[RMDB]
RNA sequence: GGGAACGACUCGAGUAGAGUCGAAAAUUCUACUACUUAGGAACUGGUCCACACAGCAAUGCUAAAUUUAAGGACCGCAUUGAUGGCGUUUUCUGGGUUGGUAAGAAUGGUGCUAAAACUGUUCCUACAGGAUUAGGAACACGUGGCACCAACCAACAUAGACAUGUACUUUCGAGUACAUGUCUAUAAAAGAAACAACAACAACAAC
Reactivity to DMS in 0.01 (KOAc 150mM, MgCl2 10mM, bicine 150mM(pH8.5), 24C), signal-to-noise 3, nucleotides 027 to 156: u000u000c010u010a100c040u010a050c040u000u000a060g010g000a080a080c080u000g030g040u000c040c090a130c090a110c080a050g000c040a040a030u020g010c030u000a080a110a170u000u010u000a070a130g030g010a180c140c210g000c040a030u000u000g010a050u020g000g010c050g020u010u000u020u000c030u010g010g040g010u010u000g040g000u000a060a060g000a070a130u000g060g040u010g020c000u000a040a040a070a100c050u000g010u000u000c000c000u000a170c110a210g010g010a270u020u010a000g000g010a010a000c000a010c030g000u000g020g000c010a010c010c010a000a040c020c010a020a080c080
Reactivity to 2A3 in 0.01 (KOAc 150mM, MgCl2 10mM, bicine 150mM(pH8.5), 24C), signal-to-noise 5, nucleotides 027 to 156: u040u010c010u010a040c010u010a000c010u090u170a050g040g050a100a060c060u140g070g050u090c060c020a070c030a020c030a110g060c040a110a070u100g000c020u180a140a160a300u280u250u170a070a050g110g040a080c050c070g000c000a040u020u110g040a090u080g040g030c040g040u030u020u060u060c010u010g090g000g000u020u090g050g010u020a100a020g100a120a070u060g010g000u010g000c010u060a090a120a110a140c010u000g000u000u000c000c000u020a040c070a110g190g080a160u140u060a010g000g000a000a000c010a000c070g030u080g010g000c000a000c000c010a000a000c000c000a010a020c010